[RMDB]
RNA sequence: GGGAACGACUCGAGUAGAGUCGAAAAGAUAUGGAUCCCAGAACAGAACUACGCAUUGAUCUCGGAAACGAGAUCAAAUGCGCUACCCUGGGAUCCUAAGUCAAAUCCGCAACUUCGGUUGCGGAAAGAUACGGUGUACCUUCGGGUACACCGUAUCAAAAGAAACAACAACAACAAC
Reactivity to DMS in 0.01 (KOAc 150mM, MgCl2 10mM, bicine 150mM(pH8.5), 24C), signal-to-noise 2, nucleotides 027 to 126: g000a000u010a270u000g000g000a020u000c000c020c000a000g000a070a070c210a060g000a190a130c200u000a130c030g020c000a020u000u000g000a000u000c010u000c020g010g000a000a060a050c000g000a010g000a000u000c020a000a010a010u000g010c000g000c050u000a070c290c170c000u000g010g000g000a000u000c000c010u000a000a090g000u000c010a080a120a200u000c000c000g010c000a000a000c010u000u000c190g020g010u000u000g020c000g010g000a000a030a030
Reactivity to 2A3 in 0.01 (KOAc 150mM, MgCl2 10mM, bicine 150mM(pH8.5), 24C), signal-to-noise 2, nucleotides 027 to 126: g010a000u020a000u050g010g010a000u020c040c000c000a000g040a120a130c140a000g110a190a210c250u300a110c300g010c010a010u010u010g010a000u000c000u020c000g000g010a030a010a000c000g000a010g000a030u020c000a000a000a000u010g010c000g020c020u040a020c040c000c000u000g000g020g000a000u020c000c000u000a000a000g010u020c020a080a080a000u010c000c000g000c000a010a000c010u050u100c290g150g020u000u000g030c000g000g000a050a010a000
The data come from the RNA Mapping Database (RMDB), library TTRDEL.
This 177-nucleotide RNA was probed chemically with DMS and 2A3.
The RNA was probed in 150 mM KOAc, 10 mM MgCl2 and 150 mM bicine (pH 8.5) at 24 C.